[RMDB]
RNA sequence: GGGAACGACUCGAGUAGAGUCGAAAAGGCGACAAGUUCGCUUGUCGCCACGGGGUCCAGCCUGGAUAGGCUGGAGGUAUUGGAAUGGUCGGGCCGCCAUUCAACGCGGGACAUUCGUGUCCCGCAAGAGUAAAGUGCUUUUCGAAGCACUUUACUCAAAAGAAACAACAACAACAAC
Reactivity to DMS in 0.01 (KOAc 150mM, MgCl2 10mM, bicine 150mM(pH8.5), 24C), signal-to-noise 2, nucleotides 027 to 126: g010g020c000g010a020c000a000a000g010u000u010c240g020c010u000u000g010u010c000g010c010c000a020c230g010g000g000g000u000c000c000a010g020c010c000u000g010g000a120u010a030g000g010c010u000g020g000a000g000g000u010a110u000u010g010g020a030a020u000g000g010u000c000g000g010g000c000c000g000c010c020a020u000u000c000a130a090c220g000c000g010g010g000a030c000a040u000u010c200g010u000g000u000c000c000c000g010c000a010a030
Chemical mapping of a 177-nucleotide RNA with DMS. The reactions ran in a buffer of 150 mM KOAc, 10 mM MgCl2 and 150 mM bicine (pH 8.5), at 24 C. The DMS profile rests on 3,819 reads. Values cover nucleotides 27 to 126.